An RNA of 177 nucleotides, treated with 2A3 and DMS and read out base by base. The RNA was probed in 150 mM KOAc, 10 mM MgCl2 and 150 mM bicine (pH 8.5) at 24 C. 2A3 adducts were read by reverse transcription with SuperScript II with manganese.

RNA sequence: GGGAACGACUCGAGUAGAGUCGAAAAGGUGGAAACCGAUCUGAAGAAAGGGCCACAUGAAUUCUGUUCACAGCAUACGCUUUAUAUUAAGGAUGGCGACGAUGGUUACUUCCUUCCUUAUCCAGACCUAUCUGUCUAGCUUCGGCUAGACAGAUAGAAAAGAAACAACAACAACAAC
Reactivity to 2A3 in 0.01 (KOAc 150mM, MgCl2 10mM, bicine 150mM(pH8.5), 24C), signal-to-noise 2, nucleotides 027 to 126: g040g000u000g010g020a100a050a010c030c020g040a040u000c050u080g100a180a130g040a100a110a030g070g000g000c030c020a010c020a030u090g080a060a070u170u110c020u090g110u050u060c060a010c010a120g040c010a060u100a190c040g010c050u070u100u020a190u050a040u120u140a060a000g140g010a060u040g030g030c020g010a000c050g030a050u050g000g030u020u020a080c030u090u030c010c000u010u110c000c000u040u080a030u040c010c000a030g070a090c020
Reactivity to DMS in 0.01 (KOAc 150mM, MgCl2 10mM, bicine 150mM(pH8.5), 24C), signal-to-noise 2, nucleotides 027 to 126: g000g020u000g020g030a130a060a080c020c020g030a180u000c020u030g030a050a110g000a020a040a190g020g020g010c020c010a050c050a080u000g010a110a080u020u030c070u000g000u010u020c070a040c160a030g010c140a100u000a200c080g020c000u030u000u000a100u010a150u010u000a080a030g020g010a030u000g040g000c110g010a100c080g010a080u000g000g000u000u000a040c060u020u000c010c000u000u010c050c110u000u010a070u000c100c050a140g000a190c200